[RMDB]
This 177-nucleotide RNA was probed chemically with DMS and 2A3.
For DMS the reverse transcriptase was MarathonRT.
The data come from the RNA Mapping Database (RMDB), library OK1LIB.
For 2A3 the reverse transcriptase was SuperScript II with manganese.
Conditions: 150 mM KOAc, 10 mM MgCl2 and 150 mM bicine (pH 8.5), 24 C.
For 2A3, 2,509 sequencing reads were counted.

RNA sequence: GGGAACGACUCGAGUAGAGUCGAAAAGAAGAUAAGAAAAUUUUCCGGUGGCCACCCGCCCGGGCCACCGUUACUCCACUCCACUCCUUCGGGACUGGUUUGGAGGAACAUAACAGGGCGGAAAGAAAAUUACUCCAUCAUUCGUGAUGGAGUAAUUAAAAGAAACAACAACAACAAC
Reactivity to DMS in 0.01 (KOAc 150mM, MgCl2 10mM, bicine 150mM(pH8.5), 24C), signal-to-noise 1, nucleotides 027 to 126: g030a090a020g000a070u010a080a120g000a120a170a160a090u020u000u000u000c000c000g010g050u000g010g050c010c000a030c250c000c000g050c010c000c000g010g020g020c000c000a000c000c000g000u020u020a020c010u010c000c000a000c020u000c000c000a000c200u000c000c000u000u010c100g000g030g000a000c090u000g000g000u010u030u000g000g020a010g000g000a000a030c080a040u070a010a040c040a010g030g000g000c020g010g040a030a010a040g010a170a030
Reactivity to 2A3 in 0.01 (KOAc 150mM, MgCl2 10mM, bicine 150mM(pH8.5), 24C), signal-to-noise 3, nucleotides 027 to 126: g020a030a030g070a020u230a180a070g090a140a240a210a160u080u090u050u020c010c000g000g000u000g000g000c000c000a050c000c010c010g010c010c010c000g000g000g000c000c000a000c010c000g000u000u010a000c000u010c000c000a000c000u010c000c000a000c020u000c010c000u020u080c160g080g000g000a000c000u000g000g050u010u000u000g010g000a000g010g000a000a010c020a020u300a120a000c020a020g000g000g000c020g010g000a020a010a000g000a000a100